[RMDB]
RNA sequence: GGGAACGACUCGAGUAGAGUCGAAAAACGGUGAUGUACGCAUCACCGAAAUUUCCAGAAAAGCGACGGACAGUGUCCUUUAGUCCAUCACUUUUCUGGGAUUUUAGCAGGACUUACGAGUCCUGCAUUCCAAAGUGUGAUUCGUCACACUUUGGAAAAAAGAAACAACAACAACAAC
Reactivity to 2A3 in 0.01 (KOAc 150mM, MgCl2 10mM, bicine 150mM(pH8.5), 24C), signal-to-noise 9, nucleotides 027 to 126: a000c000g000g000u000g000a000u010g030u060a030c300g000c100a000u000c000a000c000c000g000a000a000a000u010u010u010c000c000a000g000a000a000a000a000g020c020g000a010c010g010g010a010c020a070g110u080g200u300c090c000u130u200u140a030g000u000c000c000a010u000c000a000c000u010u000u000u000c000u000g000g000g010a010u030u060u040u080a020g000c000a000g000g010a000c000u020u050a050c260g100a010g000u000c000c000u000g000c000a000
Reactivity to DMS in 0.01 (KOAc 150mM, MgCl2 10mM, bicine 150mM(pH8.5), 24C), signal-to-noise 4, nucleotides 027 to 126: a150c030g010g010u000g000a010u000g010u020a080c210g020c000a010u000c000a010c000c000g000a010a010a030u000u000u000c000c000a010g000a010a010a010a010g020c040g020a010c070g000g010a010c000a130g010u020g010u040c190c100u010u030u020a170g000u000c000c000a080u000c010a050c000u000u000u000u000c000u000g010g000g010a000u010u010u010u010a100g010c000a020g010g000a010c000u000u020a120c160g020a050g010u000c000c000u000g000c000a030

Chemical mapping of a 177-nucleotide RNA with 2A3 and DMS. It was measured as part of the RMDB libraries RFM100 and RFMREP. Values cover nucleotides 27 to 126. Conditions: 150 mM KOAc, 10 mM MgCl2 and 150 mM bicine (pH 8.5), 24 C.